Conditions: 150 mM KOAc, 10 mM MgCl2 and 150 mM bicine (pH 8.5), 24 C. The record gives the reactivity of an RNA of 177 nucleotides to DMS and 2A3. For 2A3, 614 sequencing reads were counted. It was measured as part of the RMDB library RFM100. 2A3 adducts were read by reverse transcription with SuperScript II with manganese.
[RMDB]
RNA sequence: GGGAACGACUCGAGUAGAGUCGAAAAACGGCCGAUUACGAUCGGCCGAAUAUCUCCCCUCGGGGGGAGACAGAUUUCACGCUUGCGAGGAAUCAGAGGGAGGACAGUGCCUGGUACGCCAGGCACAUGUGGUCAUCAAGUUCGCUUGAUGACCACAAAAAGAAACAACAACAACAAC
Reactivity to DMS in 0.01 (KOAc 150mM, MgCl2 10mM, bicine 150mM(pH8.5), 24C), signal-to-noise 1, nucleotides 027 to 126: a010c000g000g000c030c000g030a000u000u030a100c160g000a150u000c000g030g000c010c010g030a000a010u020a160u030c010u000c030c040c000c040u000c130g010g000g000g030g000g000a000g000a110c300a060g010a000u000u000u000c050a280c060g010c060u000u000g000c000g080a060g000g000a050a000u030c000a200g120a250g010g000g000a150g030g000a060c210a110g000u000g000c000c010u000g000g000u020a160c160g010c030c000a000g000g030c070a000c000a000
Reactivity to 2A3 in 0.01 (KOAc 150mM, MgCl2 10mM, bicine 150mM(pH8.5), 24C), signal-to-noise 2, nucleotides 027 to 126: a000c030g000g000c010c000g000a030u100u110a020c280g060a000u000c000g020g000c030c000g000a000a000u000a000u000c000u000c000c000c000c050u110c140g250g010g050g000g010g000a000g000a030c000a050g010a020u000u060u000c140a070c120g070c040u110u240g050c040g030a100g000g000a050a000u090c060a000g010a060g020g200g000a070g030g060a030c030a070g060u000g010c000c000u000g000g020u010a020c190g120c030c000a000g010g000c000a000c000a000